[RMDB]
Chemical mapping of a 177-nucleotide RNA with DMS and 2A3. For DMS the reverse transcriptase was MarathonRT. For 2A3, 1,698 sequencing reads were counted.

RNA sequence: GGGAACGACUCGAGUAGAGUCGAAAAUUUAAUCCCAACAAAGGGCCAAGAGGGACGGCAACUUGGCCCAAGCCCAUAGAGCGAGACUCUAAAGGGAUGAGUCGUUCCCAACUCGCUCACAAUAUAACAGCUAAACACUAUUCGUAGUGUUUAGCUGAAAAGAAACAACAACAACAAC
Reactivity to DMS in 0.01 (KOAc 150mM, MgCl2 10mM, bicine 150mM(pH8.5), 24C), signal-to-noise 2, nucleotides 027 to 126: u000u000u010a170a220u010c000c020c010a130a130c220a060a120a150g000g000g000c010c010a010a000g010a120g010g010g020a070c070g000g000c020a160a110c020u000u010g000g000c000c000c010a030a040g000c010c020c000a150u010a060g010a030g000c020g000a040g030a300c130u010c030u000a010a030a120g000g000g020a060u010g010a000g000u000c010g000u000u000c000c010c000a020a020c050u000c020g010c030u000c010a130c190a070a070u000a090u000a080a170
Reactivity to 2A3 in 0.01 (KOAc 150mM, MgCl2 10mM, bicine 150mM(pH8.5), 24C), signal-to-noise 1, nucleotides 027 to 126: u000u020u030a050a060u010c000c020c000a000a000c020a030a070a040g000g000g030c000c000a010a000g020a020g030g070g050a040c020g030g020c020a050a030c010u010u010g000g000c000c000c000a010a000g000c040c000c000a070u070a040g010a000g030c060g100a070g080a160c030u010c010u140a000a110a130g070g000g010a050u200g000a010g000u000c010g000u000u000c010c000c000a010a010c010u000c020g040c000u040c000a110c030a140a050u160a000u050a270a060
The reactions ran in a buffer of 150 mM KOAc, 10 mM MgCl2 and 150 mM bicine (pH 8.5), at 24 C.